RNA sequence: GGGAACGACUCGAGUAGAGUCGAAAAGGUAGAGUCCUAGGCACCACAUCUUCGGGCGAUGUCGAAGCAAUGGCACAGUCCUAGGCAUCGUUCCAGCAUCCUAUGUCGAAGCAAUAGCACAGUCCUAACCUGAUUAGUUGUUCGCAACUAAUCAGGUAAAAGAAACAACAACAACAAC
Reactivity to 2A3 in 0.01 (KOAc 150mM, MgCl2 10mM, bicine 150mM(pH8.5), 24C), signal-to-noise 3, nucleotides 027 to 126: g110g020u100a050g020a020g080u030c020c000u020a010g000g050c020a040c090c000a030c010a080u130c010u070u050c060g040g060g000c110g040a070u080g020u070c010g040a010a000g020c020a050a070u290g020g020c100a070c040a260g070u140c000c000u000a000g000g000c020a010u030c010g010u120u090c000c000a010g030c000a020u000c000c030u080a070u100g050u040c040g060a040a010g010c030a060a070u020a060g030c030a020c020a090g030u000c000c000u030a070
Reactivity to DMS in 0.01 (KOAc 150mM, MgCl2 10mM, bicine 150mM(pH8.5), 24C), signal-to-noise 2, nucleotides 027 to 126: g010g010u010a060g020a150g010u000c070c000u010a080g000g000c030a090c030c010a020c150a070u010c050u000u000c070g030g000g010c060g000a050u010g030u010c000g000a090a050g010c090a090a060u010g000g000c040a120c250a080g000u000c020c000u000a080g010g020c040a020u000c010g020u000u000c010c020a140g000c110a070u000c040c030u010a040u000g020u010c070g000a070a050g000c050a040a040u000a080g020c070a030c030a060g000u000c000c020u020a090
Annotation: Structure probing data (2A3 and DMS) for a 177-nucleotide construct. The reactions ran in a buffer of 150 mM KOAc, 10 mM MgCl2 and 150 mM bicine (pH 8.5), at 24 C. For 2A3 the reverse transcriptase was SuperScript II with manganese. The 2A3 profile rests on 2,822 reads. For DMS the reverse transcriptase was MarathonRT. It was measured as part of the RMDB library VIROID.